[RMDB]
RNA sequence: GGGAACGACUCGAGUAGAGUCGAAAAUACCUUGAGUAUUGCUGAAUUCAGUUUAGCGUGCAUGCUCUUGGCUAUUCUCCUAGUGAUUGUCAAAUUUGGAGUUACUUAUUCGUCAAUUCAAUAUUUAAAAAGGUGCCGAUGUUCGCAUCGGCACCAAGUUUAACUCUUCGUUCGCGAAGAGUUAAACAAAAGAAACAACAACAACAAC
Reactivity to DMS in 0.01 (KOAc 150mM, MgCl2 10mM, bicine 150mM(pH8.5), 24C), signal-to-noise 1, nucleotides 027 to 156: u000a030c000c000u000u000g000a100g030u010a000u000u010g050c040u020g000a070a080u000u000c170a220g040u000u000u000a090g040c120g060u010g000c060a170u010g010c000u000c020u000u000g030g020c050u000a120u010u000c020u000c000c030u000a180g020u000g010a210u000u000g000u000c010a100a080a140u000u040u010g000g000a120g010u000u000a070c070u000u010a120u000u000c120g020u000c070a060a130u030u000c020a040a050u000a090u000u000u010a080a020a060a160a180g020g040u000g020c010c000g060a020u010g050u020u010c300g070c030a020u000c050g000g000c000a000c000c000a000a020
Reactivity to 2A3 in 0.01 (KOAc 150mM, MgCl2 10mM, bicine 150mM(pH8.5), 24C), signal-to-noise 2, nucleotides 027 to 156: u030a020c010c000u000u000g000a000g000u010a080u220u140g000c020u010g060a130a140u200u140c110a130g140u070u120u200a080g040c070g060u090g020c010a020u000g000c000u000c010u000u000g000g000c030u020a020u040u030c030u020c040c000u020a010g060u010g080a020u030u060g030u040c030a050a060a110u120u040u030g080g020a090g070u100u050a060c010u040u090a040u050u090c020g010u010c040a040a080u010u020c010a060a090u030a190u250u200u300a160a150a000a040a130g050g020u000g040c000c000g010a000u000g040u020u030c160g010c050a000u010c000g000g000c000a000c000c000a000a010